[RMDB]
RNA sequence: GGGAACGACUCGAGUAGAGUCGAAAAGCAAAAGAUUAUCCAGGUGUAGCGGUGAAAUUCGUAGAGAUCUGGUGGAUAAUGAACCGGAGGCGAAGGCGAAAGAUAACCGCUGAAAAGAAGAAUUGAACACGAAGUGAUUAUUCGUAAUCACUUCGUGAAAAGAAACAACAACAACAAC
Reactivity to 2A3 in 0.01 (KOAc 150mM, MgCl2 10mM, bicine 150mM(pH8.5), 24C), signal-to-noise 3, nucleotides 027 to 126: g040c020a030a110a000a040g090a060u090u120a030u140c060c010a060g080g050u110g090u150a010g000c000g010g000u000g000a040a010a020u000u000c010g010u060a040g010a010g010a180u000c010u020g000g030u040g010g040a080u100a230a130u280g050a040a010c020c000g020g010a010g140g230c070g020a030a000g160g020c010g000a010a020a020g120a010u010a020a000c000c000g000c020u000g010a010a010a000a020g100a040a010g030a030a130u260u170g020a100a000
Reactivity to DMS in 0.01 (KOAc 150mM, MgCl2 10mM, bicine 150mM(pH8.5), 24C), signal-to-noise 7, nucleotides 027 to 126: g000c080a060a060a090a120g010a110u000u000a060u000c030c030a110g000g020u000g020u010a030g020c000g020g010u010g000a070a140a070u000u000c010g020u000a060g010a290g000a090u000c010u000g010g020u010g010g020a140u010a080a100u000g020a120a040c010c010g010g010a040g000g010c050g010a110a150g000g000c010g000a020a040a030g000a060u000a160a040c010c010g010c010u000g000a030a050a070a080g000a070a050g000a090a100u000u000g010a080a160